[RMDB]
RNA sequence: GGGAACGACUCGAGUAGAGUCGAAAACAAUCUAAUUUUCCAGCACCGUUUUUUUAAAUGACCACUAUUUUUUCCAUUGAAUUGCCUUAGCACCUUUGUCAGACAUCAAUUGACUAUGGAUGUGUCUAUUUCUGCAUUUUCUAUUCCAUCCAUGGAGCGCAGCUGUAAGAUUCGUCUUACAGCUGCGAAAAGAAACAACAACAACAAC
Reactivity to 2A3 in 0.01 (KOAc 150mM, MgCl2 10mM, bicine 150mM(pH8.5), 24C), signal-to-noise 1, nucleotides 027 to 156: c030a000a100u040c000u130a020a220u000u120u260u040c030c000a020g070c020a040c030c030g010u030u040u020u000u020u080u300a070a020a000u040g010a080c080c000a030c090u030a150u010u090u020u050u040u060c020c040a040u000u080g040a150a030u020u040g080c010c010u010u010a000g020c030a070c000c010u050u150u100g000u040c040a020g070a150c010a070u110c020a070a300u230u050g020a020c000u060a010u010g010g000a020u010g190u050g000u070c000u040a140u040u060u000c020u120g050c050a080u230u210u010u020c000u040a050u030u010c000c010a050u090c030c000a030u010g110g020a030g180
The record gives the reactivity of an RNA of 207 nucleotides to 2A3. For 2A3, 332 sequencing reads were counted.